[RMDB]
RNA sequence: GGGAACGACUCGAGUAGAGUCGAAAAGUUUCAUCCUUCGGGAUGAAACAAAUAAAGUGACGCUCGCGCGUCACUGGCAUCGAGUAGGUCGAGCCGCGUACAAAAUCGACGGGUUCGCCCGUCGAAACAGAUCAUUUGAGUUCGCUCAAAUGAUCUGAAAAGAAACAACAACAACAAC
Reactivity to DMS in 0.01 (KOAc 150mM, MgCl2 10mM, bicine 150mM(pH8.5), 24C), signal-to-noise 4, nucleotides 027 to 126: g000u000u000u000c000a010u000c000c000u000u010c210g040g000g000a000u000g000a000a000a010c000a040a080a090u000a070a080a010g000u000g010a030c000g010c000u010c300g010c300g010c000g000u000c000a000c000u010g000g030c060a100u000c020g010a020g020u010a090g010g000u000c010g020a060g000c010c010g030c190g000u010a130c150a060a040a090a070u010c000g010a000c000g010g000g030u000u010c240g000c010c000c010g000u000c000g000a010a020a120
Reactivity to 2A3 in 0.01 (KOAc 150mM, MgCl2 10mM, bicine 150mM(pH8.5), 24C), signal-to-noise 4, nucleotides 027 to 126: g000u010u000u010c010a000u010c000c000u040u060c220g120g000g000a000u020g000a000a000a000c000a000a030a010u160a030a130a000g000u000g000a000c000g000c050u090c100g140c090g000c000g050u000c000a000c000u030g000g000c010a250u050c020g030a040g060u190a130g180g300u030c010g000a010g000c010c010g050c040g030u090a100c070a090a140a010a210u050c000g000a010c000g010g010g030u030u040c120g060c050c000c000g000u010c000g000a000a000a000